Background
Conditions: 150 mM KOAc, 10 mM MgCl2 and 150 mM bicine (pH 8.5), 24 C. The record gives the reactivity of an RNA of 177 nucleotides to DMS and 2A3.
[RMDB]
RNA sequence: GGGAACGACUCGAGUAGAGUCGAAAAUGUCUGCCAUGAUGAAAUGCAAUUUCAGUCCGUGUUUCAGCUGAUUACCCUGAUUGCAUGCAUACUCUGAGCAGACUAAAGUAUUGUCUUCGGACAAUACCGAUAGGAUCAAGUUCGCUUGAUCCUAUCGAAAAGAAACAACAACAACAAC
Reactivity to DMS in 0.01 (KOAc 150mM, MgCl2 10mM, bicine 150mM(pH8.5), 24C), signal-to-noise 7, nucleotides 027 to 126: u010g010u000c000u000g010c010c010a050u000g000a020u010g010a100a150a020u000g000c000a020a020u000u010u000c010a010g010u000c070c130g020u000g010u000u000u000c050a150g010c040u000g010a040u000u000a120c050c050c020u000g000a040u000u000g010c030a010u000g000c140a080u010a160c170u000c050u000g000a140g010c000a010g000a020c000u000a030a050a100g010u000a000u000u000g000u000c000u000u000c180g020g010a020c000a000a000u000a000c010
Reactivity to 2A3 in 0.01 (KOAc 150mM, MgCl2 10mM, bicine 150mM(pH8.5), 24C), signal-to-noise 6, nucleotides 027 to 126: u080g000u000c000u000g000c000c010a070u210g020a020u030g030a130a130a050u010g000c010a010a030u000u060u110c020a020g030u060c050c080g080u040g040u080u100u090c090a090g020c050u060g050a070u030u170a100c010c020c000u020g020a020u000u010g000c010a010u020g020c000a100u100a180c020u030c030u040g030a050g020c010a010g000a000c000u010a000a000a010g000u000a000u010u010g010u000c010u030u050c200g050g000a000c000a000a000u010a000c010
Values cover nucleotides 27 to 126. The DMS profile rests on 10,883 reads. DMS adducts were read by reverse transcription with MarathonRT. For 2A3, 12,942 sequencing reads were counted. Source: RMDB library RFMREP, as collected in RNAgym.